[RMDB]
RNA sequence: GGGAACGACUCGAGUAGAGUCGAAAAAUUCGCUGAGUACGCUGCUCUGACCUUCUUCCCAGUCUCGGUUCCUGUUCUGGGAGCUUGGGGCUGAGUAGCCACCAGCCCUGCUCUCUGCAGUGUUCUAGGCUAAUUAACAGUUCGCUGUUAAUUAGCCAAAAGAAACAACAACAACAAC
Reactivity to 2A3 in 0.01 (KOAc 150mM, MgCl2 10mM, bicine 150mM(pH8.5), 24C), signal-to-noise 1, nucleotides 027 to 126: a000u110u060c000g000c050u040g010a010g050u040a020c040g000c020u030g030c000u020c020u060g150a150c000c020u090u120c020u050u070c050c000c000a030g050u030c040u020c080g080g020u070u010c000c000u030g070u140u100c030u020g000g000g000a000g000c020u080u160g020g010g010g010c000u020g010a000g000u010a020g050c000c010a030c010c010a010g000c030c000c000u000g010c010u000c000u040c040u050g040c020a070g010u050g070u120u020c020u050a040
Reactivity to DMS in 0.01 (KOAc 150mM, MgCl2 10mM, bicine 150mM(pH8.5), 24C), signal-to-noise 2, nucleotides 027 to 126: a090u010u000c060g010c080u000g000a100g020u000a100c150g000c040u000g000c020u000c020u000g000a090c040c020u010u000c110u020u000c010c000c010a100g010u010c040u000c070g010g010u000u000c030c020u000g000u000u010c100u010g010g000g010a020g020c200u000u010g030g010g000g010c000u000g000a020g030u000a050g010c060c160a110c110c010a010g010c000c030c000u000g000c020u000c050u000c060u000g000c070a070g010u010g010u000u010c030u000a160